Structure probing data (2A3 and DMS) for a 177-nucleotide construct. The reactions ran in a buffer of 150 mM KOAc, 10 mM MgCl2 and 150 mM bicine (pH 8.5), at 24 C. The 2A3 profile rests on 6,363 reads. High DMS reactivity at an A or C suggests that its Watson-Crick edge is free. Source: RMDB library OK2TST, as collected in RNAgym.
RNA sequence: GGGAACGACUCGAGUAGAGUCGAAAACAGGUGAUGAUUGUGGAUGAUCAUCCACUUAUGCGACGCGGUGUUCGUCAGUUACUGGAGCUUGAUCCUGGCUCUGAAGUGGUCGCCGAAGCGGGCGACACCCUAGUCCAUCAUUCGUGAUGGACUAGGGAAAAGAAACAACAACAACAAC
Reactivity to 2A3 in 0.01 (KOAc 150mM, MgCl2 10mM, bicine 150mM(pH8.5), 24C), signal-to-noise 5, nucleotides 027 to 126: c060a010g000g080u050g040a070u020g020a030u050u120g060u150g160g150a110u150g030a050u120c040a000u010c050c020a010c000u110u150a130u240g070c060g030a010c020g040c040g120g110u110g060u180u090c020g010u020c020a100g030u080u080a090c080u100g040g000a020g020c010u030u040g070a040u060c010c030u030g020g000c020u000c000u050g030a070a010g080u110g110g010u000c000g010c000c010g060a140a010g180c150g030g000g000c000g000a000c000a040
Reactivity to DMS in 0.01 (KOAc 150mM, MgCl2 10mM, bicine 150mM(pH8.5), 24C), signal-to-noise 6, nucleotides 027 to 126: c100a080g010g010u000g000a060u000g010a060u000u000g010u010g010g010a090u010g000a070u000c070a100u000c040c030a020c030u010u010a060u010g010c080g000a050c050g020c070g000g010u010g020u000u010c020g030u000c020a100g020u010u010a060c090u000g010g010a030g010c030u000u000g010a090u010c030c050u010g000g000c020u000c020u000g010a090a070g020u010g000g010u000c010g020c000c000g010a080a100g030c130g010g010g010c010g010a020c030a090